[RMDB]
RNA sequence: GGGAACGACUCGAGUAGAGUCGAAAAAUAAAUUCAAUCAGGCCAAAUGUUGAAAGUAUGAAAACAGACAUUGGUGGAAUGAAGAUUGCCAUCAUUGGAAAACCUUCAUCCGGAAAAUCUGUAUUGACAACCGAAUCAGAUUCGUCUGAUUCGGUUGAAAAGAAACAACAACAACAAC
Reactivity to DMS in 0.01 (KOAc 150mM, MgCl2 10mM, bicine 150mM(pH8.5), 24C), signal-to-noise 2, nucleotides 027 to 126: a140u030a070a090a040u090u040c030a020a030u010c050a080g040g050c000c030a030a090a050u010g000u000u000g000a080a110a120g010u020a110u010g040a060a160a120a060c120a040g010a030c060a050u020u010g020g020u040g030g010a020a010u000g000a030a020g000a050u000u010g010c000c000a000u010c250a190u000u000g000g000a070a020a080a060c110c000u000u000c010a000u000c010c030g000g000a040a010a150a100u010c000u000g020u050a020u000u010g000a100
Reactivity to 2A3 in 0.01 (KOAc 150mM, MgCl2 10mM, bicine 150mM(pH8.5), 24C), signal-to-noise 3, nucleotides 027 to 126: a000u160a000a040a030u010u000c010a000a010u000c000a010g030g020c000c010a010a120a130u030g000u020u030g050a230a200a150g170u170a090u220g210a140a030a030a000c050a010g020a020c000a000u000u000g020g010u020g010g050a050a090u010g000a020a000g010a100u080u200g110c000c000a060u150c030a040u140u170g060g000a080a080a050a080c000c000u030u010c000a000u000c000c020g080g030a000a080a000a040u050c040u020g030u110a050u010u010g020a030